Chemical mapping of a 177-nucleotide RNA with 2A3. Values cover nucleotides 27 to 126. It was measured as part of the RMDB library RFM100.
RNA sequence: GGGAACGACUCGAGUAGAGUCGAAAAAGUGCACGGUACGCCGUGCACAAAAAGUAGAGGUAGGUGCGAGAAAUGACGGAACCUCACAAAUCAUCGUUCAUUGUCUCGCAGCUGCUUCAACUGUGAAGCGAUAGUUCAGCUUCGGCUGAACUAUCGCAAAAGAAACAACAACAACAAC
Reactivity to 2A3 in 0.01 (KOAc 150mM, MgCl2 10mM, bicine 150mM(pH8.5), 24C), signal-to-noise 1, nucleotides 027 to 126: a010g020u000g000c000a000c020g020g000u080a030c140g040c050c000g000u020g000c000a000c000a020a000a000a000a000g070u120a030g020a000g000g000u000a000g120g130u000g010c000g000a010g000a010a010a010u000g000a000c000g040g040a070a050c120c140u160c090a100c210a040a100a000u070c020a020u030c000g150u160u060c010a000u020u110g230u120c010u000c000g080c000a000g000c000u000g000c000u000u010c000a030a030c000u050g000u030g300a040a050
The RNA was probed in 150 mM KOAc, 10 mM MgCl2 and 150 mM bicine (pH 8.5) at 24 C.